Chemical mapping of a 177-nucleotide RNA with DMS.
RNA sequence: GGGAACGACUCGAGUAGAGUCGAAAAGAUAUGGAUGUAUGGGACAUGGAGUGUGGUCGGAAACGACCAUACUCCAACAGCCCAUGACAUCCUAAGUCAAAGCCUCAGCUGUUCGCAGCUGAGGCAACUAGCUACCAAACUUCGGUUUGGUAGCUAGAAAAGAAACAACAACAACAAC
Reactivity to DMS in 0.01 (KOAc 150mM, MgCl2 10mM, bicine 150mM(pH8.5), 24C), signal-to-noise 1, nucleotides 027 to 126: g020a030u000a030u000g000g000a020u010g010u010a030u000g020g030g000a020c040a300u050g010g000a020g020u010g030u010g020g030u000c000g020g010a010a000a030c000g000a010c000c000a010u000a000c000u000c000c000a020a010c150a130g010c020c000c000a000u000g000a040c010a000u000c000c000u000a000a080g000u000c010a160a150a200g000c010c010u000c010a010g000c000u010g000u000u010c220g040c010a020g020c000u000g000a000g010g020c010a010a040